Structure probing data (2A3 and DMS) for a 177-nucleotide construct. For 2A3 the reverse transcriptase was SuperScript II with manganese. For DMS the reverse transcriptase was MarathonRT. The DMS profile rests on 7,005 reads. Conditions: 150 mM KOAc, 10 mM MgCl2 and 150 mM bicine (pH 8.5), 24 C.
RNA sequence: GGGAACGACUCGAGUAGAGUCGAAAAUCCUGCGCCGAAGAUUUCCGGGGCUAAAACUUACUACCGAAGCUACGGCAUCAGUAAUGAUGGGUAGGGGAGCUUCCCAUACGGGUUGAAGCAUGACCGUAUCGAUUAUCAGUUUCGACUGAUAAUCGAUAAAAGAAACAACAACAACAAC
Reactivity to 2A3 in 0.01 (KOAc 150mM, MgCl2 10mM, bicine 150mM(pH8.5), 24C), signal-to-noise 9, nucleotides 027 to 126: u010c000c000u010g010c060g040c010c010g070a130a100g040a210u070u090u070c050c000g000g000g030g000c000u020a030a060a040a040c040u070u130a050c030u040a060c000c030g100a090a020g070c040u040a030c030g100g000c010a020u010c020a020g100u170a200a090u060g040a010u010g000g040g020u030a040g010g010g010g010a030g030c010u030u020c000c010c010a060u130a120c100g040g000g000u040u110g060a050a010g030c050a050u140g070a040c010c020g010u010
Reactivity to DMS in 0.01 (KOAc 150mM, MgCl2 10mM, bicine 150mM(pH8.5), 24C), signal-to-noise 4, nucleotides 027 to 126: u010c010c010u000g000c020g010c030c000g000a140a030g010a180u030u020u010c060c000g020g000g000g000c040u010a030a020a090a110c130u020u030a080c040u010a060c010c050g030a130a140g010c080u010a070c060g000g010c040a060u000c010a010g030u060a080a060u010g010a020u010g000g000g030u000a040g000g020g000g000a070g010c100u030u000c000c000c010a160u010a070c090g020g000g010u010u010g000a100a130g000c070a080u020g000a100c070c060g000u010